[RMDB]
RNA sequence: GGGAACGACUCGAGUAGAGUCGAAAAAUGGUAGUUAGUCUACUCGCUAUCCUAGUUACUUUGGAGUAAUCUAAAAUGUGUGUAAACGGGCGAAAGUCUGUAAAAUACUGGGGACAUAGGGUCAACAAGAACUAGUAGACCUUCGGGUCUACUAGAACCGAAUAUUGUACUUCGGUACAAUAUUCGGAAAAGAAACAACAACAACAAC
Reactivity to DMS in 0.01 (KOAc 150mM, MgCl2 10mM, bicine 150mM(pH8.5), 24C), signal-to-noise 1, nucleotides 027 to 156: a080u010g010g070u000a070g020u010u020a080g000u000c020u000a010c020u000c070g010c080u000a050u030c000c020u010a060g030u000u000a040c040u010u000u000g090g020a090g010u020a050a130u000c040u010a010a040a080a050u010g020u000g010u000g010u010a010a170a060c010g060g020g020c020g020a080a160a180g040u000c030u000g030u000a040a090a050a090u000a020c050u000g010g000g050g020a040c130a060u010a040g020g000g030u000c040a100a100c100a020a100g010a130a130c020u010a000g000u010a000g020a030c010c000u000u000c240g070g010g030u000c010u010a010c000u000a000g000a020a070
Reactivity to 2A3 in 0.01 (KOAc 150mM, MgCl2 10mM, bicine 150mM(pH8.5), 24C), signal-to-noise 2, nucleotides 027 to 156: a000u100g010g020u050a050g050u050u090a030g060u030c010u040a010c000u020c050g020c020u040a060u150c020c030u030a040g040u060u070a050c040u060u080u130g040g020a040g010u090a050a040u010c010u060a020a000a010a100u110g050u000g010u000g030u080a040a070a050c030g000g020g000c010g040a050a020a010g020u000c020u020g040u040a000a070a050a050u160a050c040u050g000g000g000g010a000c000a030u090a050g080g020g000u050c020a010a020c040a110a140g060a050a020c000u010a000g000u000a000g000a000c000c000u000u030c080g040g000g000u000c000u000a000c000u000a000g000a000a010